[RMDB]
RNA sequence: GGGAACGACUCGAGUAGAGUCGAAAACUCCAUCCUGGCUCUCCGGCCUCCAUUUGCCCUGGCUAGAUGUACUUUGUUCUAACAGUGUUGUAGUGACUGCUCUUGGACAGCCACUCCCUGUGCCAUGUAUGUUGAUCCUCUUCGGAGGAUCAACAUAAAAAGAAACAACAACAACAAC
Reactivity to DMS in 0.01 (KOAc 150mM, MgCl2 10mM, bicine 150mM(pH8.5), 24C), signal-to-noise 2, nucleotides 027 to 126: c020u000c030c050a060u030c020c070u020g000g020c020u010c050u020c070c030g000g000c060c000u040c040c050a150u000u010u000g020c050c050c060u010g060g000c030u000a020g000a080u050g000u040a060c140u010u000u000g010u000u040c040u020a110a110c140a060g000u000g020u000u030g000u000a030g000u000g010a170c000u000g020c080u000c020u060u020g030g010a080c050a010g000c020c040a030c010u000c000c010c030u050g000u020g030c030c110a050u010g000
Reactivity to 2A3 in 0.01 (KOAc 150mM, MgCl2 10mM, bicine 150mM(pH8.5), 24C), signal-to-noise 2, nucleotides 027 to 126: c010u040c000c000a060u010c000c000u000g090g000c020u000c040u030c030c020g010g040c020c010u070c010c000a050u080u000u250g060c020c000c000u020g010g040c000u030a010g010a160u110g020u080a070c060u050u090u150g080u050u020c040u090a190a260c070a110g000u030g060u230u070g090u130a060g050u010g070a030c000u000g070c000u000c050u090u070g070g030a020c000a010g000c020c030a060c030u050c000c000c030u000g010u050g090c020c000a080u130g050

Chemical mapping of a 177-nucleotide RNA with DMS and 2A3.
For DMS the reverse transcriptase was MarathonRT.
The RNA was probed in 150 mM KOAc, 10 mM MgCl2 and 150 mM bicine (pH 8.5) at 24 C.
For 2A3, 1,002 sequencing reads were counted.